RNA sequence: GGGAACGACUCGAGUAGAGUCGAAAAGCGUAAGGCGGCCACAGCAGAAGCGUUCACGUCGAAGCCGCUGUCAGAUUCUGGUGAAUCUGCGAUUUCUGCUGAUAUGAAGGCUGAAGAGACAGCCAAACCCAUAGCACCUAUUCGUAGGUGCUAUGGGAAAAGAAACAACAACAACAAC
Reactivity to 2A3 in 0.01 (KOAc 150mM, MgCl2 10mM, bicine 150mM(pH8.5), 24C), signal-to-noise 8, nucleotides 027 to 126: g070c050g090u130a090a080g070g000c010g000g000c030c000a100c010a030g030c000a000g000a020a000g010c020g050u070u100c080a050c110g100u090c070g140a050a010g010c010c000g000c010u010g020u020c000a000g010a050u020u010c020u290g200g050u300g070a010a010u010c030u060g010c000g020a020u030u040u000c000u000g000c010u010g010a020u040a090u240g170a100a060g000g000c000u010g000a090a020g060a040g010a060c000a000g000c000c000a040a080a100
Reactivity to DMS in 0.01 (KOAc 150mM, MgCl2 10mM, bicine 150mM(pH8.5), 24C), signal-to-noise 4, nucleotides 027 to 126: g020c070g000u040a060a070g030g000c020g010g040c010c150a160c000a020g030c000a010g010a020a030g000c030g000u030u000c070a120c140g000u050c060g000a080a160g000c020c010g020c060u010g000u040c010a020g010a030u000u000c010u020g020g030u060g000a020a000u000c010u000g000c050g000a100u010u000u000c000u000g010c010u030g020a230u040a050u000g000a100a130g000g030c000u010g010a120a070g010a300g000a120c020a010g000c000c030a020a130a120